This 207-nucleotide RNA was probed chemically with DMS and 2A3. 2A3 adducts were read by reverse transcription with SuperScript II with manganese. For 2A3, 5,371 sequencing reads were counted. DMS adducts were read by reverse transcription with MarathonRT. For DMS, 6,745 sequencing reads were counted. Reactivities are rounded to 0.1 and cut off at 0 and 3.
[RMDB]
RNA sequence: GGGAACGACUCGAGUAGAGUCGAAAACAAGGAGGAGAUGAACUUCCAGAAGAGCUUCAAUCAUCACGUGCGCACGCUGAUCGCGCGCGAAGAGGUGGCGAUUGGCCUCAUGCAUCUGUGGGAUUUUGUGGAGGCGUACGUUCAGAACCCCAGCAGCAAUGCGAUCAAUAUUCGUAUUGAUCGCAUUAAAAGAAACAACAACAACAAC
Reactivity to DMS in 0.01 (KOAc 150mM, MgCl2 10mM, bicine 150mM(pH8.5), 24C), signal-to-noise 3, nucleotides 027 to 156: c050a090a110g030g010a110g000g010a160g000a160u000g010a120a060c040u000u000c050c020a090g010a070a090g010a070g010c050u000u000c040a080a120u000c050a150u000c030a020c020g020u000g000c000g020c040a060c070g000c010u000g000a070u000c100g040c010g010c000g010c020g020a040a090g030a170g030g010u000g000g010c030g010a070u000u010g020g020c140c030u000c050a080u000g010c050a070u000c090u010g000u010g010g020g020a110u000u000u000u000g000u010g030g020a060g020g020c010g020u010a040c060g010u010u010c030a210g010a120a140c030c010c000c030a110g030c090a090g010c110
Reactivity to 2A3 in 0.01 (KOAc 150mM, MgCl2 10mM, bicine 150mM(pH8.5), 24C), signal-to-noise 6, nucleotides 027 to 156: c060a040a060g040g030a050g020g000a120g030a030u060g020a030a060c020u080u060c060c020a030g100a130a010g040a080g030c030u110u080c070a030a070u040c050a030u060c020a020c020g030u040g020c020g000c030a020c060g040c070u060g030a070u060c050g000c010g000c020g020c020g080a100a040g040a030g080g030u030g050g010c030g040a040u000u040g020g010c000c000u040c030a020u120g010c000a030u020c050u100g010u090g000g030g030a050u030u050u030u130g120u100g040g030a020g000g000c010g020u060a020c040g010u020u070c020a010g020a110a070c000c000c000c010a020g060c030a000g020c030